[RMDB]
RNA sequence: GGGAACGACUCGAGUAGAGUCGAAAAGAUGAGGAGUGAAUCACCAAAACAAGUGGUUUUGGUUUGUGAAUCACCAAAACAAGUGGUUUUGGUUUGUGAAUCAGUAUGGUUUACCCAAAACACUUGUGGGCUCUAAAACUUUCGAGUUUUAGAGCCCAAAAGAAACAACAACAACAAC
Reactivity to 2A3 in 0.01 (KOAc 150mM, MgCl2 10mM, bicine 150mM(pH8.5), 24C), signal-to-noise 1, nucleotides 027 to 126: g210a010u140g020a020g030g260a250g030u040g030a020a030u060c000a050c050c070a000a000a000a000c080a110a110g300u050g290g000u160u000u000u060g030g000u020u010u010g040u050g000a000a010u030c000a000c000c000a000a040a210a000c010a000a000g090u030g230g000u000u000u000u040g000g010u070u030u040g000u000g030a000a000u030c050a050g130u200a150u170g000g030u000u000u000a000c000c000c000a000a000a000a000c000a000c000u030u000g000u020
This 177-nucleotide RNA was probed chemically with 2A3. 2A3 adducts were read by reverse transcription with SuperScript II with manganese. Source: RMDB library RFM100, as collected in RNAgym. Values cover nucleotides 27 to 126. For 2A3, 422 sequencing reads were counted.